Structure probing data (DMS and 2A3) for a 177-nucleotide construct. DMS (dimethyl sulfate) methylates the pairing face of unpaired adenines and cytosines. Reactivities are rounded to 0.1 and cut off at 0 and 3. For 2A3 the reverse transcriptase was SuperScript II with manganese. Source: RMDB library RFMREP, as collected in RNAgym. Values cover nucleotides 27 to 126. DMS adducts were read by reverse transcription with MarathonRT.

RNA sequence: GGGAACGACUCGAGUAGAGUCGAAAAUGCACGUUGACGUAGACCCCCAAAGUCCGUUUGUGCUACAACUGCAGAAGAGUUUCCCACAAUUCGAGAUUGUGGCUCAGCAGGUCACUCCGAAUGACCACAGUAUAUUCAGGUUCGCCUGAAUAUACUGAAAAGAAACAACAACAACAAC
Reactivity to DMS in 0.01 (KOAc 150mM, MgCl2 10mM, bicine 150mM(pH8.5), 24C), signal-to-noise 7, nucleotides 027 to 126: u000g010c010a020c080g030u010u000g000a060c050g010u000a110g010a200c020c010c030c120c110a070a110a260g010u000c030c040g010u000u010u000g020u000g010c010u000a100c120a040a070c030u000g010c040a100g000a070a090g000a190g000u000u000u000c020c010c010a120c160a050a040u000u000c050g000a110g010a050u000u010g010u000g000g010c010u000c040a130g000c170a140g000g010u000c020a020c010u000c030c020g010a030a050u000g010a080c130c140a220
Reactivity to 2A3 in 0.01 (KOAc 150mM, MgCl2 10mM, bicine 150mM(pH8.5), 24C), signal-to-noise 4, nucleotides 027 to 126: u060g000c010a000c050g040u090u180g020a010c020g030u150a150g090a140c000c000c000c040c030a050a020a010g010u000c010c010g010u020u090u140g010u030g000c000u020a020c010a100a010c020u050g020c040a020g020a170a020g040a060g020u000u040u030c010c030c010a030c020a010a010u010u020c050g000a040g020a300u150u140g010u010g010g000c010u010c100a100g070c050a020g020g030u010c000a000c000u000c010c000g010a030a020u030g020a010c010c030a050